Structure probing data (DMS and 2A3) for a 177-nucleotide construct. Source: RMDB library TTRDES, as collected in RNAgym. Conditions: 150 mM KOAc, 10 mM MgCl2 and 150 mM bicine (pH 8.5), 24 C.
RNA sequence: GGGAACGACUCGAGUAGAGUCGAAAAGAUAUGGAUCACAUACUCGCAACAGCUAACGUCGGAAACGACGUUAGACAUGCGGCGUAUCGUGAUCCUAAGUCAAAAGAUGAAGCGUUCGCGCUUCAUCGUAAAAUGAGGUCUUCGGACCUCAUUUUACAAAAGAAACAACAACAACAAC
Reactivity to DMS in 0.01 (KOAc 150mM, MgCl2 10mM, bicine 150mM(pH8.5), 24C), signal-to-noise 9, nucleotides 027 to 126: g020a030u000a300u000g010g000a000u010c000a010c010a040u000a000c010u000c020g010c000a050a080c300a220g010c010u000a000a000c000g010u000c000g010g000a130a100a240c010g020a010c010g010u000u010a000g000a030c080a200u000g020c020g000g000c230g010u000a000u000c240g030u000g000a000u000c000c000u000a010a080g010u010c050a090a080a120a160g000a000u000g010a010a010g010c000g030u000u010c270g030c020g020c000u010u000c000a000u000c010
Reactivity to 2A3 in 0.01 (KOAc 150mM, MgCl2 10mM, bicine 150mM(pH8.5), 24C), signal-to-noise 6, nucleotides 027 to 126: g040a010u100a030u170g000g000a010u000c000a010c000a000u010a010c010u020c020g020c020a030a140c030a300g070c000u000a000a010c000g000u000c000g040g050a090a080a050c020g010a000c000g000u010u000a000g000a010c010a040u080g010c010g010g070c200g020u000a010u090c150g000u000g010a000u000c000c000u000a030a010g040u010c050a030a010a090a220g010a000u010g010a000a000g000c000g020u090u260c300g030c000g050c190u000u000c000a000u010c000

DMS adducts were read by reverse transcription with MarathonRT.